An RNA of 170 nucleotides, treated with DMS and 2A3 and read out base by base.
Source: RMDB library 15KLIB, as collected in RNAgym.
Conditions: 150 mM KOAc, 10 mM MgCl2 and 150 mM bicine (pH 8.5), 24 C.
For 2A3 the reverse transcriptase was SuperScript II with manganese.
RNA sequence: GGGAACGACUCGAGUAGAGUCGAAAAUAGCCAUCCGAGUGGACGUUCGUCCUCCUUCGGAUGCCCAGGUCGGACCGCGAGGAGGUGGAGAUGCCAUGCCGACCCGAAGAGGAAAGAAGAACGCGAGAUACGGGAGCCUUCGGGCUCCCGAAAAGAAACAACAACAACAAC
Reactivity to DMS in 0.01 (KOAc 150mM, MgCl2 10mM, bicine 150mM(pH8.5), 24C), signal-to-noise 4, nucleotides 027 to 129: u030a090g010c300c050a000u000c000c010g000a090g010u010g000g060a050c000g010u140u140c230g030u110c000c000u030c050c180u190u020c010g020g020a000u100g000c090c000c090a000g070g000u010c130g000g000a160c040c050g030c150g000a130g040g000a030g010g030u040g030g000a080g020a060u000g020c070c050a070u030g010c100c000g040a060c000c020c180g020a120a000g010a050g120g040a000a000a010g000a030a180g010a020a150c160g000c060g030a030g000a150u020a050
Reactivity to 2A3 in 0.01 (KOAc 150mM, MgCl2 10mM, bicine 150mM(pH8.5), 24C), signal-to-noise 2, nucleotides 027 to 129: u080a000g050c080c000a000u020c000c000g020a000g000u070g040g040a060c040g100u220u190c190g050u110c000c020u040c000c080u080u080c000g000g010a000u000g000c000c010c000a000g000g050u080c030g010g000a060c000c000g070c010g070a020g000g000a000g000g000u110g010g000a030g050a020u090g030c090c050a000u070g000c000c000g010a040c000c020c010g050a070a000g020a030g000g030a040a050a000g020a010a040g030a000a000c080g020c020g070a010g010a060u100a000